This 177-nucleotide RNA was probed chemically with DMS and 2A3. The RNA was probed in 150 mM KOAc, 10 mM MgCl2 and 150 mM bicine (pH 8.5) at 24 C. Values cover nucleotides 27 to 126.
[RMDB]
RNA sequence: GGGAACGACUCGAGUAGAGUCGAAAAGCUGUCUGGCUGGACAUUUGCCAAAGCCCAUGAACGCCCUACCAGACACUGUUGAGACAAAUAUGGGCUUUAAUUGAACGCUUUACAGAAGAAGUUUAUAUAUAGAUCACUGUUUCGACAGUGAUCUAUAAAAAGAAACAACAACAACAAC
Reactivity to DMS in 0.01 (KOAc 150mM, MgCl2 10mM, bicine 150mM(pH8.5), 24C), signal-to-noise 4, nucleotides 027 to 126: g030c100u010g000u000c020u010g020g030c040u010g000g000a140c080a090u040u030u020g020c070c090a050a040a030g010c010c000c010a020u000g010a090a120c210g000c030c000c010u000a170c030c070a040g000a060c060a150c110u000g020u010u010g000a160g000a080c080a080a040a110u020a050u000g000g000g000c000u010u000u010a050a090u030u020g000a120a140c170g000c030u000u000u010a090c060a070g010a080a130g010a090a130g000u010u000u010a050u020a170
Reactivity to 2A3 in 0.01 (KOAc 150mM, MgCl2 10mM, bicine 150mM(pH8.5), 24C), signal-to-noise 3, nucleotides 027 to 126: g050c050u000g000u030c000u000g030g000c000u050g060g000a030c030a190u180u240u250g130c040c010a010a040a030g000c000c010c000a020u030g040a070a010c080g070c000c000c000u010a070c000c040a010g020a030c050a020c090u070g090u140u150g050a140g020a050c060a000a060a010u220a030u050g000g000g000c000u020u050u010a070a020u050u100g030a090a020c050g000c020u100u080u070a100c070a070g060a060a000g070a060a050g170u000u110u000a160u000a020